RNA sequence: GGGAACGACUCGAGUAGAGUCGAAAAAGAAAUAACCAGCAAAAAGCAGACGAGGUAGAGCGCGCGCUCUACCAAUAGCUGGGUGUCUGACGGCAAGUGUAGACGCCGCUACACAAAUAAACAAAAACAAGAUAUGUAGUUUCGACUACAUAUCUUGAAAAGAAACAACAACAACAAC
Reactivity to 2A3 in 0.01 (KOAc 150mM, MgCl2 10mM, bicine 150mM(pH8.5), 24C), signal-to-noise 1, nucleotides 027 to 126: a000g060a030a110a010u090a020a050c010c000a000g030c030a000a090a090a070a020g110c050a040g030a100c080g050a040g060g000u000a010g020a010g010c140g000c080g040c190g000c200u000c000u020a000c000c010a000a010u000a000g000c000u000g000g060g000u020g000u000c070u020g040a140c000g000g020c040a100a190g020u050g050u220a060g050a130c090g000c050c070g020c010u040a030c030a010c010a030a100a020u200a070a110a010c070a050a110a010a010a060
Reactivity to DMS in 0.01 (KOAc 150mM, MgCl2 10mM, bicine 150mM(pH8.5), 24C), signal-to-noise 2, nucleotides 027 to 126: a060g000a070a090a130u000a140a230c000c010a040g010c010a080a070a150a100a040g020c060a060g010a080c090g000a170g000g000u000a000g000a010g030c060g050c300g020c300g000c020u020c000u000a030c000c020a040a040u000a090g030c040u000g010g000g040u010g020u000c120u000g000a080c110g020g000c060a110a120g010u000g010u000a070g010a080c110g030c040c050g010c020u000a010c030a020c040a110a090a030u000a020a030a050c050a050a110a060a070a040
An RNA of 177 nucleotides, treated with 2A3 and DMS and read out base by base. It was measured as part of the RMDB library M2PK90. The DMS profile rests on 999 reads. Conditions: 150 mM KOAc, 10 mM MgCl2 and 150 mM bicine (pH 8.5), 24 C.